[RMDB]
RNA sequence: GGGAACGACUCGAGUAGAGUCGAAAAUAUAUGCCUAUUCAAGAAACAGCAGCAUGGAGGAGAUAGGGAAAUAUAUGUGCUGGGAAGAGAAGAGAGGAUUGUUCAGUCCAUAGUUGAAGCUAUUGCCGGUGAGCACAUCAUUCGUGAUGUGCUCACCAAAAGAAACAACAACAACAAC
Reactivity to 2A3 in 0.01 (KOAc 150mM, MgCl2 10mM, bicine 150mM(pH8.5), 24C), signal-to-noise 2, nucleotides 027 to 126: u190a000u020a010u100g020c000c000u000a040u080u080c140a240a000g060a140a050a020c050a060g080c040a010g000c010a030u070g090g050a070g040g030a060g030a050u120a080g020g060g040a000a120a000u110a000u010a000u050g020u010g000c040u030g080g020g030a070a090g040a030g000a190a000g000a000g030a020g050g020a090u070u040g020u040u020c040a020g030u040c030c020a050u060a010g030u000u090g060a050a000g000c040u030a010u070u120g100c080c100
Reactivity to DMS in 0.01 (KOAc 150mM, MgCl2 10mM, bicine 150mM(pH8.5), 24C), signal-to-noise 1, nucleotides 027 to 126: u060a060u000a010u000g020c010c000u000a100u000u030c120a050a070g050a110a030a090c140a090g030c060a010g110c200a080u000g000g000a000g000g010a150g000a070u000a010g000g000g000a150a170a060u000a060u000a040u040g020u000g010c000u000g000g020g010a010a010g000a000g040a020a030g000a050g010a070g020g020a040u000u010g000u000u000c090a090g020u010c130c190a080u000a080g040u000u050g000a040a160g000c010u000a230u040u030g010c150c090
Description:
The record gives the reactivity of an RNA of 177 nucleotides to 2A3 and DMS. The data come from the RNA Mapping Database (RMDB), library OK1LIB. Conditions: 150 mM KOAc, 10 mM MgCl2 and 150 mM bicine (pH 8.5), 24 C. DMS adducts were read by reverse transcription with MarathonRT.